[RMDB]
RNA sequence: GGGAACGACUCGAGUAGAGUCGAAAACAUACGGACUUCGGUCCGUAUGAAAGAACGUCAAAUUGACGCAAACUUCCGCGUCAUCGCGAGGAAGCGAGGAAAAAAUCGAGGUGUUCGCACCUCGAAACACUUACUAGUAGUUCGCUACUAGUAAGUGAAAAGAAACAACAACAACAAC
Reactivity to DMS in 0.01 (KOAc 150mM, MgCl2 10mM, bicine 150mM(pH8.5), 24C), signal-to-noise 9, nucleotides 027 to 126: c010a010u000a000c000g010g010a020c000u000u010c210g040g010u000c000c000g010u000a000u000g000a060a080a090g020a100a170c030g000u000c020a050a110a160u010u010g010a010c000g010c050a040a150a110c050u000u000c020c010g000c020g010u000c120a100u010c160g010c010g010a050g000g010a030a030g010c040g010a210g010g010a010a020a060a080a100a070u000c000g010a010g000g020u000g010u000u010c200g010c000a010c000c000u000c000g000a010a050a100
Reactivity to 2A3 in 0.01 (KOAc 150mM, MgCl2 10mM, bicine 150mM(pH8.5), 24C), signal-to-noise 9, nucleotides 027 to 126: c000a000u000a000c000g010g000a000c010u040u070c220g080g000u000c000c010g010u000a000u000g000a000a000a000g070a100a020c030g030u020c050a070a280a300u200u170g010a000c000g000c040a040a070a080c040u070u010c030c030g030c010g080u090c080a150u120c060g010c020g030a070g050g080a060a030g010c030g030a080g050g070a090a100a020a010a010a020u040c010g000a000g000g000u010g020u040u040c150g020c040a000c000c000u000c000g000a000a000a000
Record summary:
The record gives the reactivity of an RNA of 177 nucleotides to DMS and 2A3. The DMS profile rests on 30,319 reads. High DMS reactivity at an A or C suggests that its Watson-Crick edge is free.